[RMDB]
An RNA of 177 nucleotides, treated with DMS and 2A3 and read out base by base. 2A3 adducts were read by reverse transcription with SuperScript II with manganese.

RNA sequence: GGGAACGACUCGAGUAGAGUCGAAAAGGACUGCAGUGUGAAUAGUAGGUCUGUUGCUUUUGCAUUUACAGCUCCAAGACAGUGAGUCUCAAGACCCUGUGAUAAAGAGAACUCAGGCAUCCAGAUCUGUAAGUACCAGAUUCGUCUGGUACUUACAAAAAGAAACAACAACAACAAC
Reactivity to DMS in 0.01 (KOAc 150mM, MgCl2 10mM, bicine 150mM(pH8.5), 24C), signal-to-noise 6, nucleotides 027 to 126: g000g000a070c020u010g010c110a050g020u000g010u010g000a060a040u010a060g040u000a050g020g010u010c080u000g020u010u000g010c030u000u000u000u000g010c020a040u000u000u000a080c080a050g010c080u000c020c030a120a100g010a060c080a070g020u000g010a070g010u000c010u000c090a100a110g000a100c030c020c030u010g010u000g000a080u000a050a100a130g010a100g000a050a060c040u000c040a040g020g020c060a070u000c060c050a090g000a090u010c090
Reactivity to 2A3 in 0.01 (KOAc 150mM, MgCl2 10mM, bicine 150mM(pH8.5), 24C), signal-to-noise 3, nucleotides 027 to 126: g050g020a010c030u040g000c030a010g030u030g000u000g110a050a070u170a140g080u030a020g050g080u050c100u080g140u070u050g040c000u040u110u060u070g000c000a040u080u090u090a050c030a000g020c030u000c020c010a050a020g060a010c020a020g060u040g110a040g000u000c020u010c040a060a080g020a090c000c000c000u010g030u000g040a130u140a100a100a020g050a010g000a040a020c010u000c030a010g030g030c010a000u020c020c000a030g030a120u070c020

Description:
For DMS, 7,183 sequencing reads were counted. For 2A3, 3,962 sequencing reads were counted.